[RMDB]
RNA sequence: GGGAACGACUCGAGUAGAGUCGAAAAUCGCAGGUCAGCUAUACUGCGGUGAAUGUGUUCCUGAGCCUUGUACACACCGCCCGUCAAGCCACGAAAGCGGGGGGCACCUAAAGUCGCCGGGCUAACCAACACAGCAGAUAUUCGUAUCUGCUGUGUUAAAAGAAACAACAACAACAAC
Reactivity to DMS in 0.01 (KOAc 150mM, MgCl2 10mM, bicine 150mM(pH8.5), 24C), signal-to-noise 6, nucleotides 027 to 126: u000c010g000c010a010g010g010u020c120a080g030c130u020a070u020a070c000u000g010c010g000g020u000g000a110a100u030g020u010g010u000u000c000c010u000g010a070g010c020c030u000u000g020u020a050c090a100c100a090c040c020g000c010c040c020g000u020c060a140a130g020c040c060a080c090g010a070a100a160g000c030g000g010g000g000g000g000c090a070c090c060u000a060a080a090g020u000c060g030c020c040g000g010g000c050u000a070a100c120c090
Reactivity to 2A3 in 0.01 (KOAc 150mM, MgCl2 10mM, bicine 150mM(pH8.5), 24C), signal-to-noise 9, nucleotides 027 to 126: u020c000g010c000a000g030g020u190c070a040g050c080u100a110u080a240c010u010g000c000g000g000u010g050a090a120u180g050u030g010u080u010c000c000u000g020a010g000c000c020u060u090g060u090a010c040a010c000a010c040c030g090c030c010c000g040u050c040a060a020g020c030c010a070c070g090a140a070a000g020c030g000g000g010g000g010g000c030a070c010c040u100a110a070a030g030u050c020g000c030c010g000g000g000c000u020a030a020c010c010